[RMDB]
RNA sequence: GGGAACGACUCGAGUAGAGUCGAAAAGAUAUGGAGGUAUCCCUGCGAUAAGCUGCACUCGGAAACGAGUGGCAGCUUUUGACGCAGGAUACCUCCUAAGUCAAACUUGAGAGGUUCGCCUCUCAAGCCAUUCUUGUUGGUUCGCCAACAAGAAUGGAAAAGAAACAACAACAACAAC
Reactivity to 2A3 in 0.01 (KOAc 150mM, MgCl2 10mM, bicine 150mM(pH8.5), 24C), signal-to-noise 3, nucleotides 027 to 126: g010a020u030a010u090g000g010a000g000g010u020a010u060c190c120c040u020g000c040g090a160u030a300a000g000c010u000g020c010a000c000u010c020g020g000a030a030a010c030g010a010g020u030g100g020c010a000g000c010u000u000u010u020g010a010c030g000c020a000g000g000a000u000a000c000c000u010c000c000u010a010a000g000u020c010a010a030a060c010u010u010g010a000g010a010g070g020u120u180c300g090c090c000u000c010u000c000a010a000g000
Reactivity to DMS in 0.01 (KOAc 150mM, MgCl2 10mM, bicine 150mM(pH8.5), 24C), signal-to-noise 4, nucleotides 027 to 126: g000a020u000a190u010g000g000a020g000g010u000a000u000c130c060c070u000g020c000g030a130u010a000a010g010c000u000g000c000a050c000u000c000g030g000a040a050a090c000g000a020g010u000g010g020c010a000g000c000u000u000u000u000g010a200c120g020c000a020g000g010a000u000a000c000c000u000c000c000u000a000a060g000u000c020a120a120a300c000u000u010g010a010g010a010g010g010u000u030c300g010c010c000u000c000u000c000a000a010g000